[RMDB]
RNA sequence: GGGAACGACUCGAGUAGAGUCGAAAAAUCGAGCUGCCGGGCAUGGCCUGGGCGCCGUUGCGGCAGUUCAUGCUGCACGGCGAUUUCGAUCAGUUCUGCAUGCUCGGCUAUGCCAGCCAGAUCGGCACUGGCAGCAUAAUUUCGAUUAUGCUGCCAGAAAAGAAACAACAACAACAAC
Reactivity to 2A3 in 0.01 (KOAc 150mM, MgCl2 10mM, bicine 150mM(pH8.5), 24C), signal-to-noise 2, nucleotides 027 to 126: a000u070c040g000a010g010c020u010g020c040c010g010g010g000c010a020u020g030g080c030c040u050g000g000g020c010g000c000c000g090u140u100g000c000g000g030c000a010g020u150u110c010a010u040g010c000u000g000c000a000c000g010g010c020g000a030u090u070u160c040g070a090u050c010a000g010u190u120c010u130g160c010a020u030g000c010u000c000g020g000c000u000a010u000g000c020c010a020g030c010c000a080g010a170u140c080g030g010c040a020
Reactivity to DMS in 0.01 (KOAc 150mM, MgCl2 10mM, bicine 150mM(pH8.5), 24C), signal-to-noise 2, nucleotides 027 to 126: a060u010c060g000a100g020c030u000g010c040c000g000g000g010c010a020u000g010g000c180c000u000g000g000g010c010g010c010c000g000u010u020g040c000g000g030c000a030g000u010u000c300a080u010g010c000u010g000c000a020c000g000g000c000g010a050u000u020u000c200g010a140u010c000a050g010u000u010c150u010g000c040a020u000g010c000u000c000g000g000c030u010a010u010g000c020c030a090g010c080c040a110g000a050u010c120g000g000c070a180